The record gives the reactivity of an RNA of 207 nucleotides to 2A3. Conditions: 150 mM KOAc, 10 mM MgCl2 and 150 mM bicine (pH 8.5), 24 C. It was measured as part of the RMDB library OK3TST. The 2A3 profile rests on 517 reads.
[RMDB]
RNA sequence: GGGAACGACUCGAGUAGAGUCGAAAACAUUUUACUCAAGAGAAGAUUGCUUACAAAUAUCACACAGGAGACCUUUCUAGUCUCCUGCAGGAGGGUGGCUGACCCAGGGAACCUCCAGGCAAGCAGGACAUAUGCCAAGUAUCCUACAUGUGGACAACAUCGUGGGAUAGUUCGCUAUCCCACGAUGAAAAGAAACAACAACAACAAC
Reactivity to 2A3 in 0.01 (KOAc 150mM, MgCl2 10mM, bicine 150mM(pH8.5), 24C), signal-to-noise 1, nucleotides 027 to 156: c010a010u050u080u100u150a170c090u110c020a000a090g100a060g080a160a090g050a140u030u100g000c000u050u070a050c040a080a180a090u120a080u130c040a030c010a000c000a020g000g000a000g000a010c000c070u130u240u090c070u170a020g010u000c000u000c050c000u010g000c000a000g030g080a000g020g020g020u020g150g000c000u060g050a130c010c030c010a000g000g010g010a020a030c000c000u060c070c000a030g040g000c030a000a000g000c010a020g050g020a000c000a030u070a010u040g010c000c000a000a000g000u010a020u000c000c000u080a070c010a050u150g020u190g080g000a000c020a050a020